[RMDB]
RNA sequence: GGGAACGACUCGAGUAGAGUCGAAAAGAUAUGGACACGGUUUGCGGCAUACUAUCUCGGAAACGAGCCGAGGUAUGAACUACCGUGAUCGUGUCCUAAGUCAAACGUUGCUCUUCGGAGCAACGAACGAACGUACAUACUUCGGUAUGUACGUUCGAAAAGAAACAACAACAACAAC
Reactivity to DMS in 0.01 (KOAc 150mM, MgCl2 10mM, bicine 150mM(pH8.5), 24C), signal-to-noise 2, nucleotides 027 to 126: g000a040u000a300u000g000g000a000c010a000c010g000g000u010u000u000g080c000g000g030c050a070u000a080c040u010a030u000c000u000c000g000g000a070a040a160c300g000a180g020c050c010g000a020g000g000u000a000u000g010a040a120c240u000a070c000c000g010u000g000a010u010c000g020u000g010u010c000c000u000a020a050g010u000c030a100a070a230c030g000u000u000g000c000u000c000u000u040c220g070g000a010g020c000a020a000c000g020a040a110
Reactivity to 2A3 in 0.01 (KOAc 150mM, MgCl2 10mM, bicine 150mM(pH8.5), 24C), signal-to-noise 4, nucleotides 027 to 126: g030a020u060a030u180g000g010a010c010a000c010g000g120u060u160u300g040c000g020g000c000a040u130a240c030u030a040u080c000u000c010g060g060a280a300a210c190g060a140g030c020c000g050a030g030g000u010a050u160g090a070a060c100u080a040c170c000g000u000g010a000u000c010g000u010g000u000c010c020u000a090a000g030u020c000a000a060a060c020g010u010u000g000c010u000c000u060u060c290g100g020a010g000c010a000a000c010g000a060a000